Annotation
Conditions: 150 mM KOAc, 10 mM MgCl2 and 150 mM bicine (pH 8.5), 24 C. An RNA of 207 nucleotides, treated with 2A3 and DMS and read out base by base. The 2A3 profile rests on 5,521 reads.
[RMDB]
RNA sequence: GGGAACGACUCGAGUAGAGUCGAAAAUGAAUGAACCUCAAAAACAUUAUGCUCAGCAAACGUGCUCCUAGGUUAUUUACACAAUUGACUUGAAAAUGUAUGUCCACAUGAAAACGUAUACACAAAUGUUUAUAGCAGCUUUAUUCAUAAUUGUCAACAUUUAAUGCGUGUUCGCACGCAUUAAAUGAAAAGAAACAACAACAACAAC
Reactivity to 2A3 in 0.01 (KOAc 150mM, MgCl2 10mM, bicine 150mM(pH8.5), 24C), signal-to-noise 8, nucleotides 027 to 156: u080g030a010a030u010g000a020a040c020c030u040c040a080a080a020a040a020c020a040u090u110a100u160g010c030u060c110a040g020c060a090a080a040c050g040u030g010c010u010c020c020u030a030g030g020u070u050a090u070u150u130a070c090a000c020a050a100u080u090g040a040c020u040u100g040a050a030a030a040u070g030u050a040u040g040u030c040c010a050c010a070u080g060a040a080a030a000c050g030u080a050u060a100c060a010c020a040a110a070u060g030u010u070u030a120u090a040g040c050a010g010c030u050u070u080a050u030u040c010a030u050a160a110u130u090g060u140c030a030a020
Reactivity to DMS in 0.01 (KOAc 150mM, MgCl2 10mM, bicine 150mM(pH8.5), 24C), signal-to-noise 3, nucleotides 027 to 156: u000g000a080a050u000g000a030a140c070c020u050c030a090a110a120a110a050c020a050u010u000a090u000g010c010u000c080a120g010c080a070a070a100c060g020u000g030c010u000c060c060u000a060g020g020u000u000a060u000u010u010a120c060a070c100a070a110u010u010g030a060c020u010u030g000a060a050a080a060u000g010u010a040u000g020u000c060c050a110c060a090u010g000a110a050a060a040c060g010u000a090u000a090c040a050c040a060a050a060u000g020u000u000u000a100u000a130g020c080a040g000c080u000u000u000a000u000u000c020a030u000a090a130u000u000g000u000c010a040a170